[RMDB]
Structure probing data (2A3) for a 207-nucleotide construct. The reactions ran in a buffer of 150 mM KOAc, 10 mM MgCl2 and 150 mM bicine (pH 8.5), at 24 C.

RNA sequence: GGGAACGACUCGAGUAGAGUCGAAAACGGUUACGCCUUCUUUACCGUUAUCAAGGAAGGUACUCGGCCAUGCUAAGGGAAGCAUUAUUCCUUAGGCGCAUGUCGCCGCCAGCAUGGUGUGAGUGGAAAAAGUAUGCUGGGUUCGCCCAGCAUACAAUCAUCGUUGCUGGUUCGCCAGCAACGAUGAAAAAGAAACAACAACAACAAC
Reactivity to 2A3 in 0.01 (KOAc 150mM, MgCl2 10mM, bicine 150mM(pH8.5), 24C), signal-to-noise 2, nucleotides 027 to 156: c010g020g000u050u040a030c060g000c000c000u000u000c000u000u020u060a030c020c000g160u060u140a030u040c050a000a030g010g030a000a000g020g000u010a010c000u000c000g040g000c000c000a000u000g000c000u090a150a110g000g000g020a030a030g010c100a180u100u090a160u200u110c000c000u030u070a060g000g000c000g030c050a170u160g150u300c000g010c040c000g030c040c020a010g000c010a010u010g000g000u080g080u050g010a000g000u010g050g070a050a050a010a000a030g020u000a000u000g000c000u000g040g040g000u030u050c180g140c000c000c000a000g040c000a000u000a030c000a000a040